[RMDB]
RNA sequence: GGGAACGACUCGAGUAGAGUCGAAAAAACACUCCGGCCUGUAUCUGUGUGUGGUGUACGUCAACGACCAUAUUCACGCCUGGGGCCACAUUACCAUCAGCACCGCGGCGCAGUACCGGAACGCGGUGGUAUCACAACAGUUCGCUGUUGUGAUACCAAAAGAAACAACAACAACAAC
Reactivity to 2A3 in 0.01 (KOAc 150mM, MgCl2 10mM, bicine 150mM(pH8.5), 24C), signal-to-noise 4, nucleotides 027 to 126: a000a000c070a020c030u030c020c030g010g000c000c010u050g020u120a110u130c060u050g050u000g010u010g020u020g070g040u040g050u070a080c060g100u060c130a130a050c070g090a040c010c010a020u040a070u150u100c040a020c070g020c010c030u060g040g000g000g000c010c000a020c000a010u040u090a050c000c030a060u100c030a010g040c020a020c030c000g020c020g040g000c050g000c040a020g020u030a090c020c030g060g030a070a040c030g010c030g060g000u010
Reactivity to DMS in 0.01 (KOAc 150mM, MgCl2 10mM, bicine 150mM(pH8.5), 24C), signal-to-noise 4, nucleotides 027 to 126: a060a070c100a100c050u000c040c030g000g020c180c010u000g010u010a040u000c080u000g020u000g020u010g030u010g010g010u000g020u000a060c160g000u010c110a050a060c110g000a060c040c020a050u000a060u010u000c070a030c120g010c040c040u010g020g000g000g010c020c040a030c090a030u000u000a080c060c030a060u010c060a080g000c050a040c020c040g010c020g010g000c090g020c050a070g010u000a070c070c030g010g000a050a090c070g010c060g010g010u000
This 177-nucleotide RNA was probed chemically with 2A3 and DMS. In probing experiments dimethyl sulfate is read out at A N1 and C N3, which are open when not base-paired. For DMS the reverse transcriptase was MarathonRT. For 2A3 the reverse transcriptase was SuperScript II with manganese. Values cover nucleotides 27 to 126. For DMS, 4,658 sequencing reads were counted. The RNA was probed in 150 mM KOAc, 10 mM MgCl2 and 150 mM bicine (pH 8.5) at 24 C. The 2A3 profile rests on 7,272 reads.